[RMDB]
RNA sequence: GGGAACGACUCGAGUAGAGUCGAAAAUCAGUGAUGCAUUGAAUAAUGACAGACUGAAUAGAUAUGAUCUGAUUCAUGUGAAAUGUCUCUCUUCUCAGUCCUCAGGUGGAAGAUAGUGAGGGGACUAUUCAAUUUGAUGGAGAAGGUUAUGCAUUGAGCGCUACGACUAUUUCGAUAGUCGUAGCGCAAAAGAAACAACAACAACAAC
Reactivity to 2A3 in 0.01 (KOAc 150mM, MgCl2 10mM, bicine 150mM(pH8.5), 24C), signal-to-noise 2, nucleotides 027 to 156: u080c010a010g000u040g150a120u030g010c010a010u040u090g070a160a030u190a060a100u180g020a030c040a040g020a010c010u010g000a010a090u040a040g080a020u070a040u170g110a080u010c040u050g060a100u090u000c000a020u140g040u040g110a140a070a050u110g040u010c040u010c000u000c020u100u030c010u070c020a060g020u060c010c000u010c020a100g080g120u160g120g100a060a060g020a140u130a050g110u130g070a080g070g010g010g000a000c020u100a030u060u090c100a090a140u020u060u300g080a050u040g040g000a060g020a020a010g020g000u010u030a060u110g020c030a020u050u110g020a030